[RMDB]
RNA sequence: GGGAACGACUCGAGUAGAGUCGAAAAUGCUGUUCCGGCGCGGCGGCGGGCAAGCCCGGCCCCCACAUAUCGUUGAGAAGGGCGCGGUCGCCUGCUGGCUGCUCGUGCGGCUGCGCCGUAUAGACCAGCUUUUAUCAUCGUUCGCGAUGAUAAAAGCAAAAGAAACAACAACAACAAC
Reactivity to DMS in 0.01 (KOAc 150mM, MgCl2 10mM, bicine 150mM(pH8.5), 24C), signal-to-noise 2, nucleotides 027 to 126: u010g010c010u000g000u000u010c080c000g010g010c000g040c010g030g010c000g000g020c020g000g010g010c010a030a150g010c060c020c070g020g000c020c040c010c010c020a080c110a150u000a090u010c170g020u000u010g010a160g000a120a180g000g000g010c030g000c170g020g010u000c040g020c020c010u000g000c070u000g010g000c060u000g000c000u000c020g010u000g010c000g000g000c000u000g010c000g020c020c000g020u000a020u010a090g000a080c040c030a090
Reactivity to 2A3 in 0.01 (KOAc 150mM, MgCl2 10mM, bicine 150mM(pH8.5), 24C), signal-to-noise 1, nucleotides 027 to 126: u080g030c010u010g020u090u010c080c000g040g020c030g040c000g000g000c000g050g000c000g030g030g000c030a100a080g000c080c010c000g000g030c010c070c000c010c000a060c020a040u300a030u200c150g080u070u120g060a080g080a240a140g030g000g000c070g000c050g050g040u120c010g000c000c000u060g040c020u050g040g010c020u010g000c000u020c030g090u300g300c070g070g040c010u010g000c000g020c030c000g000u020a050u070a010g020a010c000c000a000